This 177-nucleotide RNA was probed chemically with DMS and 2A3. The RNA was probed in 150 mM KOAc, 10 mM MgCl2 and 150 mM bicine (pH 8.5) at 24 C. The 2A3 profile rests on 1,219 reads. The DMS profile rests on 1,141 reads. For 2A3 the reverse transcriptase was SuperScript II with manganese.
RNA sequence: GGGAACGACUCGAGUAGAGUCGAAAAUGAAAUACCGUGUGCAAGACGCUGAUCUUGCCAUGAUCUGGAACUUUAGUGCUGAGGUCCGAGUUCCAGGGUAUCAUGUCGGACCUUAGCACUAAUUAAACCAACAAGCAUCGUUCGCGAUGCUUGUUGGAAAAGAAACAACAACAACAAC
Reactivity to DMS in 0.01 (KOAc 150mM, MgCl2 10mM, bicine 150mM(pH8.5), 24C), signal-to-noise 1, nucleotides 027 to 126: u000g020a100a100a090u020a030c080c020g040u040g000u040g030c010a000a020g030a030c010g000c240u020g000a130u000c010u000u000g000c000c010a020u000g000a040u000c110u000g000g010a060a190c100u000u000u000a000g000u000g000c000u010g000a010g010g020u000c000c000g020a060g010u000u020c190c080a110g000g020g030u010a100u010c080a070u010g030u000c000g000g010a000c000c000u000u000a000g000c000a000c020u010a000a010u000u000a090a050a170
Reactivity to 2A3 in 0.01 (KOAc 150mM, MgCl2 10mM, bicine 150mM(pH8.5), 24C), signal-to-noise 2, nucleotides 027 to 126: u150g060a020a010a000u130a060c070c030g000u020g080u110g070c000a000a000g000a010c030g110c300u130g040a300u010c000u000u010g040c000c010a010u010g010a000u070c040u070g000g090a020a030c000u030u020u000a010g000u010g000c000u000g000a000g060g000u000c000c000g010a020g020u130u070c030c000a010g080g020g030u120a110u210c090a090u140g060u080c010g000g010a000c000c000u010u030a010g000c010a030c000u010a000a000u010u070a010a030a010